RNA sequence: GGGAACGACUCGAGUAGAGUCGAAAAGUAUAACCAAUAAGGUUCUUGUACUAAGUGGCUCGGACAAUGAGGCCCUUCCGAAAGGAGAAGUUUGAACCGUGAGGGGAAAGCAACUGCUAUGAGUGUCUUUCCGUCUACAGUUCGCUGUAGACGGAAAAAAAGAAACAACAACAACAAC
Reactivity to 2A3 in 0.01 (KOAc 150mM, MgCl2 10mM, bicine 150mM(pH8.5), 24C), signal-to-noise 2, nucleotides 027 to 126: g000u000a060u020a050a050c010c030a040a100u200a230a060g000g000u020u050c050u030u170g040u010a050c040u060a090a160g020u130g010g010c010u020c020g080g060a010c050a070a200u180g000a010g010g100c000c000c000u000u000c030c040g110a070a070a020g120g020a070g000a190a120g080u020u080u120g030a060a060c010c000g010u000g000a030g000g020g000g020a040a030a000g000c020a050a090c040u060g000c000u080a150u100g060a050g000u150g040u120c020
Reactivity to DMS in 0.01 (KOAc 150mM, MgCl2 10mM, bicine 150mM(pH8.5), 24C), signal-to-noise 3, nucleotides 027 to 126: g010u000a040u010a100a110c020c010a150a110u010a110a120g000g000u000u020c130u040u010g010u020a020c030u000a060a120g040u000g000g000c000u000c010g000g000a110c210a050a070u020g000a040g010g010c030c040c020u020u000c030c000g030a100a150a090g000g000a020g010a050a110g000u010u010u000g000a230a140c010c010g000u040g000a120g030g000g000g000a100a010a100g010c060a060a080c040u000g010c050u000a050u050g010a030g030u000g030u020c030